An RNA of 177 nucleotides, treated with DMS and 2A3 and read out base by base.
The RNA was probed in 150 mM KOAc, 10 mM MgCl2 and 150 mM bicine (pH 8.5) at 24 C.
The data come from the RNA Mapping Database (RMDB), libraries RFM100 and RFMREP.
[RMDB]
RNA sequence: GGGAACGACUCGAGUAGAGUCGAAAAAGCGUUUUCUUAUCAGCUUGAUAAAUGCUCUUGAAAAUCGUAGAUGUGUGCAAUAGCAAUAUCUACAAUAGCUUGGGAUUCAGUUUCUAUAUAACUUCAAGACGAAUUACACAUUCGUGUGUAAUUCGUCAAAAGAAACAACAACAACAAC
Reactivity to DMS in 0.01 (KOAc 150mM, MgCl2 10mM, bicine 150mM(pH8.5), 24C), signal-to-noise 3, nucleotides 027 to 126: a020g000c010g020u010u000u000u030c070u020u030a090u010c110a120g020c080u010u010g010a090u050a080a060a080u060g000c010u000c060u000u020g010a060a030a090a090u030c180g000u010a000g020a030u000g030u010g010u000g030c020a150a140u020a100g000c000a020a020u030a000u000c010u020a000c010a160a100u010a100g000c040u000u000g010g010g000a070u020u020c100a070g000u000u030u010c030u000a070u010a060u040a060a050c120u000u000c110a020a210
Reactivity to 2A3 in 0.01 (KOAc 150mM, MgCl2 10mM, bicine 150mM(pH8.5), 24C), signal-to-noise 4, nucleotides 027 to 126: a000g030c020g000u030u000u130u020c080u050u130a070u120c060a020g100c040u070u050g030a030u150a090a100a040u160g010c000u000c000u070u050g110a030a070a120a090u140c060g020u000a010g010a040u010g040u040g070u000g020c030a090a300u070a190g000c000a000a010u010a010u010c000u000a000c000a040a080u020a040g010c020u030u020g020g000g140a200u120u050c020a040g010u040u000u000c060u000a100u000a040u050a240a150c060u100u090c060a080a030